[RMDB]
RNA sequence: GGGAACGACUCGAGUAGAGUCGAAAAGUUAUAACUUCUUCAUGGAUAAAGCAUACUCUCAUAUCGGCUUAAGCCGGUGGCAUGGGUACGUUUAAACAUGUGUAGAGUGCAAAGGUUCCUUAAAAAAGUUACUGAGUCUUUUCGAAGACUCAGUAACAAAAGAAACAACAACAACAAC
Reactivity to 2A3 in 0.01 (KOAc 150mM, MgCl2 10mM, bicine 150mM(pH8.5), 24C), signal-to-noise 5, nucleotides 027 to 126: g060u100u140a120u030a160a060c020u060u070c000u090u040c010a000u020g040g010a080u050a110a080a010g030c010a010u010a010c000u000c010u010c000a010u010a010u110c000g010g000c020u250u180a140a020g010c000c000g020g000u010g010g040c110a130u120g030g000g000u010a010c020g000u000u000u010a040a080a010c010a010u000g040u000g020u080a010g010a020g050u070g080c100a080a050a010g090g000u010u010c000c000u070u100a110a040a010a020a000a000
Reactivity to DMS in 0.01 (KOAc 150mM, MgCl2 10mM, bicine 150mM(pH8.5), 24C), signal-to-noise 4, nucleotides 027 to 126: g010u020u030a080u030a060a090c000u000u030c020u010u010c010a010u000g010g000a110u000a060a010a020g000c000a080u000a010c010u000c010u000c130a300u120a010u000c000g010g000c010u020u020a130a130g010c000c010g020g010u000g010g000c220a100u010g000g000g010u000a000c090g000u000u000u000a030a070a140c000a000u010g010u020g020u020a060g010a040g010u000g000c190a110a070a100g010g010u000u000c010c000u010u040a000a070a070a100a060a090